[RMDB]
RNA sequence: GGGAACGACUCGAGUAGAGUCGAAAAGCUCCUUUGCGCUUUUUUUUCGGAUUAGGCGCGGAGGCGAAAGUCACCCUCCUCGCAUCGCAAGUUCGUGCUUGCGACUUACACGUAGGGCGAGGGGUGGAAAACAGUAUGGGAUUCGUCCCAUACUGAACGUGGUACUUGAGUUCGCUCAAGUACCACGAAAAGAAACAACAACAACAAC
Reactivity to 2A3 in 0.01 (KOAc 150mM, MgCl2 10mM, bicine 150mM(pH8.5), 24C), signal-to-noise 2, nucleotides 027 to 156: g050c050u090c010c040u000u020u030g000c020g020c000u090u050u010u020u010u010u010u130c220g260g000a020u010u050a050g000g010c000g010c020g000g000a000g000g000c030g050a130a020a030g100u120c050a100c030c000c010u010c010c010u010c000g000c000a030u000c020g000c020a020a000g010u120u290c190g150u300g160c000u000u010g010c000g000a000c000u010u120a010c070a030c090g300u240a100g010g120g010c000g000a010g020g020g000g000u210g010g020a050a120a000a000c000a010g000u000a000u020g000g000g000a030u040u060c110g070u000c010c130c000a000u000a000c000u000g000a020a000